This 177-nucleotide RNA was probed chemically with DMS.

RNA sequence: GGGAACGACUCGAGUAGAGUCGAAAAUGGCCCUCGGCUCCAGCGGCCUCCUACCUCCCUUGGCCGGCCGGCGUGCUGGCGGAGCCGGGGGACUAGCGUAGCCGUUAGGCCGAGCGCGUGCUCGACAAGCUAAUGGUGCAUUCGUGCACCAUUAGCUAAAAGAAACAACAACAACAAC
Reactivity to DMS in 0.01 (KOAc 150mM, MgCl2 10mM, bicine 150mM(pH8.5), 24C), signal-to-noise 2, nucleotides 027 to 126: u010g000g010c000c010c000u000c010g010g000c010u000c010c010a200g030c090g030g010c040c010u000c090c060u000a230c060c070u000c030c040c050u010u020g010g020c050c020g010g020c010c010g000g010c110g040u010g010c010u010g010g010c040g020g010a030g010c000c010g010g010g020g000g000a000c030u010a060g040c070g020u010a110g000c010c020g020u000u020a070g010g040c010c020g010a040g010c040g020c210g000u000g010c020u000c020g000a080c120a150

The RNA was probed in 150 mM KOAc, 10 mM MgCl2 and 150 mM bicine (pH 8.5) at 24 C. DMS adducts were read by reverse transcription with MarathonRT.